[RMDB]
RNA sequence: GGGAACGACUCGAGUAGAGUCGAAAAAGCCACUGCCCCUGGCCUGUUUUUGUUUUUUUGAAUUUUGAAACUUCGUAAUAUCAGGAAAUUAAUGUAGCAGAGGUCAUUGAAACGCUUGAGAGCAGCACACUUGGUGUUUAUUUCAGCAGAUGAUUCAAUCCCAUAUUUACUUCGGUAAAUAUGGGAUAAAAGAAACAACAACAACAAC
Reactivity to DMS in 0.01 (KOAc 150mM, MgCl2 10mM, bicine 150mM(pH8.5), 24C), signal-to-noise 1, nucleotides 027 to 156: a090g020c020c050a140c080u000g000c040c050c000c110u000g010g000c050c110u010g020u010u000u000u000u030g000u030u000u000u010u010u010u010g000a100a120u010u000u020u000g000a200a040a110c080u000u010c060g040u000a060a050u000a050u000c000a060g020g000a140a050a080u010u030a060a110u020g000u000a110g020c050a060g020a170g040g000u000c020a060u010u000g020a050a110a150c070g000c080u010u000g010a130g020a130g020c060a060g040c010a060c060a080c080u010u000g020g020u000g000u010u000u000a050u000u000u000c040a070g050c050a100g030a170u000g000a190u000u000c070a080

Chemical mapping of a 207-nucleotide RNA with DMS. It was measured as part of the RMDB library OK3TST. For DMS, 1,567 sequencing reads were counted.